An RNA of 207 nucleotides, treated with 2A3 and DMS and read out base by base. The data come from the RNA Mapping Database (RMDB), library RNAMAK. Conditions: 150 mM KOAc, 10 mM MgCl2 and 150 mM bicine (pH 8.5), 24 C. For 2A3, 4,401 sequencing reads were counted. DMS adducts were read by reverse transcription with MarathonRT. The DMS profile rests on 3,605 reads.

RNA sequence: GGGAACGACUCGAGUAGAGUCGAAAAGAUAUGGAUUUAGCUAGGUCCAAUCACAACGUUGAAAGAAGCUCGGAAACGAGCUUCUGGAGUUGUGGAGACCUUGGACCUAAAUCCUAAGUCAAAGCGAAAUGGAUAGAUUCGUCUAUCCAUUUCGCAAGGAACACUUAAUCUUCGGAUUAAGUGUUCCAAAAGAAACAACAACAACAAC
Reactivity to 2A3 in 0.01 (KOAc 150mM, MgCl2 10mM, bicine 150mM(pH8.5), 24C), signal-to-noise 3, nucleotides 027 to 156: g000a010u030a010u060g010g000a000u000u030u050a070g060c110u060a040g030g030u000c010c030a030a060u180c000a010c000a000a010c010g210u230u030g000a010a020a000g010a010a000g000c000u000c000g000g000a020a010a010c000g000a010g010c010u000u000c000u000g010g000a020g000u000u010g000u010g010g020a070g020a040c020c040u010u030g000g000a000c000c000u000a000a000a000u000c010c000u000a030a000g010u000c070a090a060a020g000c000g010a000a000a000u000g000g000a000u000a000g010a020u030u090c230g030u000c140u000a000u000c010c000a000u000u000u000c000g000c000a010a010
Reactivity to DMS in 0.01 (KOAc 150mM, MgCl2 10mM, bicine 150mM(pH8.5), 24C), signal-to-noise 2, nucleotides 027 to 156: g030a080u010a170u010g000g010a000u000u000u000a030g030c080u010a030g030g000u010c000c020a050a150u000c020a000c000a050a010c000g020u000u000g010a200a240a050g020a030a060g010c000u000c020g030g000a110a080a250c000g020a010g040c000u000u000c000u000g000g000a050g020u000u000g020u000g000g010a100g000a050c130c110u010u000g010g030a040c120c000u010a010a040a020u000c040c010u000a030a130g000u000c010a110a110a220g000c000g000a020a010a020u000g010g000a060u000a010g020a050u010u020c300g030u000c010u000a000u010c000c000a000u010u000u010c010g010c010a000a030